[RMDB]
RNA sequence: GGGAACGACUCGAGUAGAGUCGAAAAUACACCUUAAGGAAGCGAAAGAACUUGUCCUCCAGCCAAAGAUCCUGCACCUCCCUCUUGCUACAGUGGUACUUCAUAUAGGGAUAACAGGCGGUGCGAAGGUAGCAUCACUGUUCGCAGUGAUGCUACCAAAAGAAACAACAACAACAAC
Reactivity to 2A3 in 0.01 (KOAc 150mM, MgCl2 10mM, bicine 150mM(pH8.5), 24C), signal-to-noise 3, nucleotides 027 to 126: u050a000c020a050c000c010u040u080a030a050g100g020a000a000g090c030g040a190a070a120g080a050a040c020u050u060g030u080c020c000u040c000c000a060g040c050c000a010a190a050g060a040u090c020c010u010g000c020a000c000c000u030c000c010c010u020c010u000u020g030c000u040a080c040a140g020u050g100g020u090a110c030u080u060c030a010u200a050u040a110g040g000g020a020u090a130a040c020a040g070g000c050g010g010u000g000c010g050a030a010
Reactivity to DMS in 0.01 (KOAc 150mM, MgCl2 10mM, bicine 150mM(pH8.5), 24C), signal-to-noise 2, nucleotides 027 to 126: u020a150c220a090c010c000u010u010a090a260g000g010a140a070g000c130g000a100a030a000g000a030a060c060u020u020g020u000c010c010u020c000c010a060g000c050c020a090a090a150g010a090u000c020c030u020g000c080a020c010c020u060c050c000c000u020c010u000u000g000c070u000a030c120a060g020u010g040g000u010a020c030u000u020c070a110u040a040u000a010g020g020g000a070u000a010a100c140a070g000g030c090g040g000u000g030c070g000a070a070
This 177-nucleotide RNA was probed chemically with 2A3 and DMS.
The RNA was probed in 150 mM KOAc, 10 mM MgCl2 and 150 mM bicine (pH 8.5) at 24 C.
Reactivities are given for positions 27 through 126.
2A3 adducts were read by reverse transcription with SuperScript II with manganese.
It was measured as part of the RMDB library OK1LIB.
DMS adducts were read by reverse transcription with MarathonRT.
The DMS profile rests on 1,870 reads.